The data come from the RNA Mapping Database (RMDB), library OK2TST. Chemical mapping of a 177-nucleotide RNA with DMS and 2A3. The DMS profile rests on 1,059 reads. Values cover nucleotides 27 to 126.
[RMDB]
RNA sequence: GGGAACGACUCGAGUAGAGUCGAAAAACACAUCCAACAAGAACAGAUGCAAGGAGUAGUAGUGAUAAUACCUAACCGCUUAGGGCUUUCUUCAUGUGGAAAGACUGUCCAGUACUUUUUGCGGUUGAUCUGCUGGAGGAUUCGUCCUCCAGCAGAUAAAAGAAACAACAACAACAAC
Reactivity to DMS in 0.01 (KOAc 150mM, MgCl2 10mM, bicine 150mM(pH8.5), 24C), signal-to-noise 1, nucleotides 027 to 126: a050c080a060c080a050u000c000c010a120a110c150a120a140g000a030a140c130a050g000a060u000g030c050a030a010g010g000a030g000u000a090g000u000a060g020u010g050a030u000a050a060u030a080c030c020u020a020a040c080c050g010c100u000u010a030g000g000g000c010u000u000u000c000u020u000c100a150u000g030u000g000g010a060a020a020g010a010c050u020g020u010c000c000a190g010u000a060c050u000u010u010u010u000g010c030g030g000u000u000g000
Reactivity to 2A3 in 0.01 (KOAc 150mM, MgCl2 10mM, bicine 150mM(pH8.5), 24C), signal-to-noise 1, nucleotides 027 to 126: a000c060a000c010a050u000c010c000a050a000c060a120a000g110a080a020c020a020g090a160u130g000c010a040a010g030g010a000g030u100a000g020u020a000g040u050g110a080u040a120a030u060a120c000c000u060a030a020c020c040g000c080u050u080a040g020g000g010c060u060u040u010c020u050u040c100a130u300g070u090g300g010a060a000a020g010a010c020u030g000u000c000c000a040g030u070a140c030u000u090u000u110u010g000c000g010g000u000u020g020

For 2A3 the reverse transcriptase was SuperScript II with manganese.